[RMDB]
RNA sequence: GGGAACGACUCGAGUAGAGUCGAAAAGAUAUGGAGGUGCCUUUGAUCUGUACGUAACAUCAGUCGGAAACGACUGUGGUACAGGGAGGCACUCCUAAGUCAAAACAGAGACCUUCGGGUCUCUGAACUAACACCGUACGUUCGCGUACGGUGUUAGAAAAGAAACAACAACAACAAC
Reactivity to DMS in 0.01 (KOAc 150mM, MgCl2 10mM, bicine 150mM(pH8.5), 24C), signal-to-noise 2, nucleotides 027 to 126: g010a020u000a300u000g000g000a030g010g020u010g000c000c010u000u020u000g000a070u010c000u000g000u000a010c020g000u000a110a060c150a030u010c000a000g010u000c000g000g000a130a070a240c010g010a000c000u000g020u000g020g000u000a010c020a000g020g010g000a020g020g000c000a030c000u000c000c000u030a050a120g000u000c010a070a080a130a260c030a020g000a040g000a000c000c000u000u000c210g030g010g000u000c000u000c000u000g000a040a120
Reactivity to 2A3 in 0.01 (KOAc 150mM, MgCl2 10mM, bicine 150mM(pH8.5), 24C), signal-to-noise 2, nucleotides 027 to 126: g030a020u040a030u160g000g050a100g200g230u060g030c010c000u270u210u130g090a080u050c000u020g000u000a010c010g040u100a140a110c040a140u300c010a020g010u000c010g010g030a100a070a020c010g000a000c000u000g000u030g030g020u000a010c000a020g000g000g010a020g000g010c010a000c000u000c000c000u030a100a010g050u010c030a090a060a040a070c000a010g020a000g000a000c020c060u100u170c300g050g020g000u000c000u010c010u020g000a010a000